Source information:
Conditions: 150 mM KOAc, 10 mM MgCl2 and 150 mM bicine (pH 8.5), 24 C. An RNA of 207 nucleotides, treated with 2A3 and DMS and read out base by base. The 2A3 profile rests on 4,743 reads.

RNA sequence: GGGAACGACUCGAGUAGAGUCGAAAAACAGUCCUUCCAGGUUUGUAGAUGCUUCUGCAAAAGUAACAGACAGAUGGAUGUCCCGAGGCUUGGGGAAGUAACACGCAGAUGAUUUGCACAAGGACACGCUUUAAGAAGCAGUGGACUUGGAAGUCCACAUUUAGGUGAGGUUCGCCUCACCUAAAUGAAAAGAAACAACAACAACAAC
Reactivity to 2A3 in 0.01 (KOAc 150mM, MgCl2 10mM, bicine 150mM(pH8.5), 24C), signal-to-noise 6, nucleotides 027 to 156: a000c030a020g060u030c010c000u040u030c030c030a060g020g080u020u070u070g070u100a080g020a190u070g070c030u040u040c030u070g060c080a060a060a020a040g070u090a080a030c030a050g100a000c020a020g080a060u070g070g020a040u020g050u030c020c000c020g030a100g040g000c070u080u090g020g000g010g020a050a030g040u110a060a040c050a020c170g040c030a020g040a100u100g020a050u090u050u140g010c020a020c010a060a030g030g000a010c000a010c040g040c010u090u060u060a180a100g090a050a000g040c050a020g040u020g010g010a000c010u020u030g020g010a030a010g020u010c010c010a020
Reactivity to DMS in 0.01 (KOAc 150mM, MgCl2 10mM, bicine 150mM(pH8.5), 24C), signal-to-noise 3, nucleotides 027 to 156: a060c080a160g010u010c050c020u000u000c010c030a130g020g040u010u000u000g040u000a100g000a140u000g020c010u010u000c040u000g010c070a060a060a080a100g020u010a060a130c050a080g000a110c040a100g020a130u000g000g010a110u000g000u010c010c000c010g020a140g020g000c060u000u000g000g010g010g010a060a060g020u000a070a090c040a060c110g030c040a070g010a100u000g010a160u000u000u000g030c010a130c000a050a060g010g000a090c030a040c080g020c050u000u000u000a060a110g000a100a060g000c030a110g030u000g000g000a040c020u000u000g020g000a050a090g010u000c010c010a060